RNA sequence: GGGAACGACUCGAGUAGAGUCGAAAAUGCUUAGACGUAAGUCGAAGGUAUGAAUUGAAGCCCCAGUAAACGGCGGCCGUAACUAUAACGGUCCUAAGGUAGCGAAAUUCCUUGUCGGGUAAGUUCCGACCCGCACGAAAGGCGUAAUGAUUUGGGCCAUCAGGUGAUAGUUCGCUAUCACCUGAUGAAAAGAAACAACAACAACAAC
Reactivity to DMS in 0.01 (KOAc 150mM, MgCl2 10mM, bicine 150mM(pH8.5), 24C), signal-to-noise 5, nucleotides 027 to 156: u000g020c020u010u010a260g010a020c010g040u000a140a210g010u000c000g000a150a120g020g030u000a030u000g000a110a130u010u000g020a140a140g020c040c000c010c040a140g020u000a050a060a040c080g010g020c070g030g010c000c000g010u000a140a140c090u000a190u000a110a060c050g030g010u000c010c030u000a030a080g030g020u010a100g000c020g010a060a070a150u000u000c000c020u000u000g010u000c020g000g010g010u010a060a160g000u010u010c040c000g000a070c010c000c000g020c120a090c070g000a040a050a100g010g000c020g020u000a070a100u000g010a230u000u000u000g000g010g020c100
Reactivity to 2A3 in 0.01 (KOAc 150mM, MgCl2 10mM, bicine 150mM(pH8.5), 24C), signal-to-noise 5, nucleotides 027 to 156: u030g000c020u020u020a010g000a010c020g080u110a100a080g010u020c010g010a020a010g020g000u080a040u090g110a150a090u150u120g060a070a010g020c000c010c000c020a040g030u120a020a120a050c060g060g020c050g010g000c010c000g010u020a080a040c090u090a090u060a270a000c000g010g040u040c010c020u050a060a030g060g010u020a030g040c030g050a050a060a070u070u040c000c000u030u080g030u060c010g000g000g020u030a060a040g030u070u040c010c000g010a010c000c000c000g120c020a060c030g110a170a020a000g040g000c030g030u070a110a010u170g100a050u060u060u130g000g000g000c000
An RNA of 207 nucleotides, treated with DMS and 2A3 and read out base by base. Reactivities are given for positions 27 through 156. For DMS, 13,629 sequencing reads were counted. The RNA was probed in 150 mM KOAc, 10 mM MgCl2 and 150 mM bicine (pH 8.5) at 24 C.